Overview: This 177-nucleotide RNA was probed chemically with 2A3 and DMS. For DMS, 5,717 sequencing reads were counted. In probing experiments dimethyl sulfate is read out at A N1 and C N3, which are open when not base-paired. 2A3 adducts were read by reverse transcription with SuperScript II with manganese. The data come from the RNA Mapping Database (RMDB), library OK2TST. The reactions ran in a buffer of 150 mM KOAc, 10 mM MgCl2 and 150 mM bicine (pH 8.5), at 24 C. The 2A3 profile rests on 7,960 reads. Reactivities are given for positions 27 through 126.
RNA sequence: GGGAACGACUCGAGUAGAGUCGAAAAAGGAGCACUGACAGGACCCAACUGUGAGAGAAACCUCUGCAAGUAAAAUCUCAGUUGCAUACCAAAAACAGGUCAGAACUAAUCAGUCAAUACCUGAACCUCAUAUUAUGAGAUUCGUCUCAUAAUAUGAAAAAGAAACAACAACAACAAC
Reactivity to 2A3 in 0.01 (KOAc 150mM, MgCl2 10mM, bicine 150mM(pH8.5), 24C), signal-to-noise 6, nucleotides 027 to 126: a030g040g010a020g010c050a000c020u030g030a020c050a070g060g030a050c010c020c000a020a010c020u030g000u070g060a030g000a010g020a210a180a110c030c030u040c080u170g020c060a070a070g020u110a080a110a090a140u020c030u000c020a020g020u080u060g010c010a040u120a190c020c040a040a080a030a060a080c020a010g030g010u020c020a030g050a100a010c030u070a110a140u150c040a010g030u010c020a020a070u020a170c000c010u010g030a040a050c010c010
Reactivity to DMS in 0.01 (KOAc 150mM, MgCl2 10mM, bicine 150mM(pH8.5), 24C), signal-to-noise 6, nucleotides 027 to 126: a090g000g020a140g020c070a040c030u000g010a080c170a090g000g000a120c030c040c050a120a080c020u000g000u010g010a060g010a090g010a170a160a140c170c030u000c040u010g020c070a070a080g010u010a050a060a100a120u000c050u000c010a020g000u000u000g020c060a060u010a110c060c060a040a050a060a100a120c060a020g000g000u010c090a170g000a080a070c050u000a080a110u010c140a080g000u000c030a060a110u010a060c070c010u000g000a080a080c120c060